Annotation: Chemical mapping of a 177-nucleotide RNA with 2A3 and DMS. 2A3 adducts were read by reverse transcription with SuperScript II with manganese. The RNA was probed in 150 mM KOAc, 10 mM MgCl2 and 150 mM bicine (pH 8.5) at 24 C. The data come from the RNA Mapping Database (RMDB), library TTRDES.

RNA sequence: GGGAACGACUCGAGUAGAGUCGAAAAGAUAUGGACCCAGCAAGACAUGCUCGUAUUCGGAAACGAAUAUCGAGCAACAGCUUGCGGGUCCUAAGUCAAAACACGUUCGGCUUCGGCCGAACGUGAAUCUUAUUACGCCGUUCGCGGCGUAAUAAGAAAAAGAAACAACAACAACAAC
Reactivity to 2A3 in 0.01 (KOAc 150mM, MgCl2 10mM, bicine 150mM(pH8.5), 24C), signal-to-noise 1, nucleotides 027 to 126: g020a020u000a020u050g010g000a000c000c000c050a020g030c010a000a010g000a030c190a300u300g000c010u000c020g020u000a000u000u000c000g000g000a050a030a020c010g010a020a010u090a110u300c050g000a000g020c000a010a040c000a010g010c010u010u010g010c000g000g010g000u000c010c000u000a000a000g000u000c020a140a050a000a050c020a000c000g020u050u010c010g040g040c030u130u110c280g200g000c010c000g010a000a000c000g000u000g000a000a000
Reactivity to DMS in 0.01 (KOAc 150mM, MgCl2 10mM, bicine 150mM(pH8.5), 24C), signal-to-noise 1, nucleotides 027 to 126: g000a000u000a060u000g000g000a010c000c000c000a230g080c010a030a010g000a030c080a140u000g020c010u000c000g010u000a010u000u010c000g040g010a010a010a040c010g000a030a000u000a000u000c050g020a000g020c000a030a060c200a200g010c000u000u000g000c010g020g000g000u000c000c000u000a000a030g000u010c000a140a110a160a270c010a010c000g000u000u000c000g000g000c000u000u020c300g030g000c000c000g020a000a000c010g020u010g010a030a050